[RMDB]
This 177-nucleotide RNA was probed chemically with 2A3 and DMS. The RNA was probed in 150 mM KOAc, 10 mM MgCl2 and 150 mM bicine (pH 8.5) at 24 C. Reactivities are given for positions 27 through 126. The data come from the RNA Mapping Database (RMDB), library M2PK50.
RNA sequence: GGGAACGACUCGAGUAGAGUCGAAAAGAGUUUCUGUUCGCAGAAACUCAGUGCGUAGCUGCGUUAAUAUAAUAGCUACGCUUAAUAAAUUUUUUUAACGCAAAAGUGGUUAUUUCGAUAACCACAAUUAAAUAUCAGUCUUCGGACUGAUAUUUAAAAAAGAAACAACAACAACAAC
Reactivity to 2A3 in 0.01 (KOAc 150mM, MgCl2 10mM, bicine 150mM(pH8.5), 24C), signal-to-noise 1, nucleotides 027 to 126: g000a000g000u010u000u010c000u030g040u000u060c220g000c070a040g000a010a000a010c000u030c000a000g050u020g000c000g000u000a000g000c010u050g020c000g000u000u000a120a100u180a070u120a270a300u200a130g000c000u020a010c000g000c030u000u060a010a000u060a000a070a020u040u040u000u000u000u020u170a050a000c000g020c000a000a020a080a080g000u010g000g000u010u050a030u020u100u080c190g030a010u020a020a000c000c010a010c010a000a000
Reactivity to DMS in 0.01 (KOAc 150mM, MgCl2 10mM, bicine 150mM(pH8.5), 24C), signal-to-noise 1, nucleotides 027 to 126: g010a010g000u010u000u000c000u010g010u000u000c160g000c000a020g010a000a000a010c000u000c000a050g020u000g000c010g030u000a010g020c000u000g000c010g020u000u000a010a070u000a090u000a080a110u000a030g000c000u000a000c000g010c020u000u010a020a050u000a080a110a030u000u010u000u000u010u000u000a010a000c010g010c020a170a060a100a100g000u010g000g000u010u000a000u000u000u010c160g000a030u000a000a000c000c000a000c010a030a020
Overview:
Values are in units of 0.01, from 0 to 300, in steps of 10. DMS adducts were read by reverse transcription with MarathonRT.